The record gives the reactivity of an RNA of 177 nucleotides to 2A3 and DMS.
The reactions ran in a buffer of 150 mM KOAc, 10 mM MgCl2 and 150 mM bicine (pH 8.5), at 24 C.
DMS adducts were read by reverse transcription with MarathonRT.
[RMDB]
RNA sequence: GGGAACGACUCGAGUAGAGUCGAAAAUUGUAUUGCAUAUACAACUAUGCGAUGCACUUUGUUCAUUUUAACUUUGGAUAUAUGUGCCUUGCUAUGAACGCGUUCAUUUUUAAGUGACCGGACCCUACUUAUAGCCUUUGUUCGCAAAGGCUAUAAGAAAAGAAACAACAACAACAAC
Reactivity to 2A3 in 0.01 (KOAc 150mM, MgCl2 10mM, bicine 150mM(pH8.5), 24C), signal-to-noise 2, nucleotides 027 to 126: u010u000g010u010a020u010u080g070c040a020u050a000u010a210c050a050a010c070u020a030u070g010c000g010a000u010g000c000a000c020u010u050u060g000u010u030c010a050u030u030u080u180a170a140c090u040u020u030g050g010a010u010a000u010a010u170g040u040g000c010c000u020u040g000c030u020a040u160g070a070a030c010g020c020g070u020u020c010a070u040u070u070u070u230a150a040g030u030g030a020c010c010g020g050a060c010c010c010u050a110
Reactivity to DMS in 0.01 (KOAc 150mM, MgCl2 10mM, bicine 150mM(pH8.5), 24C), signal-to-noise 3, nucleotides 027 to 126: u000u000g000u000a000u000u000g010c090a040u010a030u000a090c230a070a120c110u010a030u000g000c000g010a020u000g010c000a010c060u000u000u000g000u010u000c020a050u000u000u020u020a060a190c200u000u000u000g000g000a050u000a050u010a030u010g000u000g010c000c070u020u010g000c030u000a080u000g000a080a070c080g010c120g020u000u000c030a030u000u010u010u010u000a040a120g010u000g000a040c050c020g020g000a080c010c000c030u000a160